[RMDB]
RNA sequence: GGGAACGACUCGAGUAGAGUCGAAAAUCUUCACGGAAGAACGUCUGGUCGUACAGCACCGAGGCCAGAAGAACGUCGUCGGCGUUGAGUGGGCUGAGAUGGUCUUGCGUCAACCGCGAGUCAUCGGACUCGAUUACCUUUUCGAAGGUAAUCGAGUAAAAGAAACAACAACAACAAC
Reactivity to DMS in 0.01 (KOAc 150mM, MgCl2 10mM, bicine 150mM(pH8.5), 24C), signal-to-noise 8, nucleotides 027 to 126: u000c030u000u010c080a140c120g010g010a060a060g020a070a100c080g020u000c010u000g000g010u000c020g010u010a110c080a080g010c060a060c050c040g010a100g010g000c020c030a050g010a080a080g000a090a120c090g000u000c030g030u010c090g020g010c060g010u000u000g010a110g020u010g010g010g020c030u000g000a130g010a030u000g000g010u010c010u000u000g000c000g000u000c170a080a110c300c020g000c020g010a020g010u000c020a030u000c030g000g010
Reactivity to 2A3 in 0.01 (KOAc 150mM, MgCl2 10mM, bicine 150mM(pH8.5), 24C), signal-to-noise 5, nucleotides 027 to 126: u030c010u090u130c040a050c090g080g030a050a040g020a090a030c020g030u020c010u010g020g000u020c030g040u090a070c040a070g000c040a060c070c020g010a040g010g000c020c000a030g020a040a020g060a060a020c030g020u020c020g080u030c050g030g010c020g030u040u070g050a050g050u120g000g040g000c010u040g050a030g000a140u010g010g040u050c020u010u030g010c010g040u050c060a090a060c070c010g010c020g020a010g040u030c010a030u020c030g020g010